RNA sequence: GGGAACGACUCGAGUAGAGUCGAAAAGAUAUGGAUUACUUUACGCAGGACCGAAGAACUCGGAAACGAGGGAGGUCCUGAACUACGUAGAGUAAUCCUAAGUCAAACGGUGGGUUCGCCCACCGAACUAUUAAAUUAUCUUCGGAUAAUUUAAUAGAAAAGAAACAACAACAACAAC
Reactivity to DMS in 0.01 (KOAc 150mM, MgCl2 10mM, bicine 150mM(pH8.5), 24C), signal-to-noise 3, nucleotides 027 to 126: g000a050u000a300u000g000g000a010u000u000a010c000u010u000u000a000c000g010c020a020g010g020a010c000c000g000a120a130g010a140a190c010u000c000g000g000a110a050a130c010g010a010g000g020g000a070g020g030u000c000c000u010g000a020a040c110u010a300c020g010u000a010g000a000g000u000a000a000u000c000c000u000a010a060g000u000c050a120a110a200c020g020g010u000g000g000g010u000u010c260g010c000c000c000a010c000c000g000a030a090
Reactivity to 2A3 in 0.01 (KOAc 150mM, MgCl2 10mM, bicine 150mM(pH8.5), 24C), signal-to-noise 2, nucleotides 027 to 126: g030a010u070a030u200g010g000a020u020u010a000c010u000u020u000a020c050g010c040a020g000g020a000c010c030g140a300a060g040a170a080c020u010c000g010g050a070a030a020c010g000a010g020g040g020a040g000g030u020c000c000u000g000a000a000c010u170a020c000g010u000a000g000a000g010u000a000a010u000c000c000u000a040a000g020u000c000a090a020a080c020g000g010u010g020g060g000u080u110c300g080c030c000c000a000c000c000g010a010a010